[RMDB]
RNA sequence: GGGAACGACUCGAGUAGAGUCGAAAACUCUGAUUGUUCGCAAUCAGAGAAAUCGUGCUAGUGCUGAUAUUGGCUCAGGCCAUACUGGCAUUACUGGUGUCAAAAGGGCUCCCUUCGGGGAGCCCAAGAUGCAGAAAUGGUUCGCCAUUUCUGCAUCAAAAGAAACAACAACAACAAC
Reactivity to DMS in 0.01 (KOAc 150mM, MgCl2 10mM, bicine 150mM(pH8.5), 24C), signal-to-noise 1, nucleotides 027 to 126: c000u000c000u000g000a000u000u000g000u020u000c260g060c000a000a000u000c010a000g010a010g000a040a050a020u010c030g020u000g000c120u010a020g020u000g000c000u010g000a010u000a030u000u000g030g000c020u000c280a180g010g020c010c020a010u000a000c010u010g000g000c040a050u000u000a070c080u000g000g030u000g000u010c160a030a060a220a150g000g030g000c000u000c000c010c000u000u010c110g070g030g000g010a010g000c020c000c000a000a000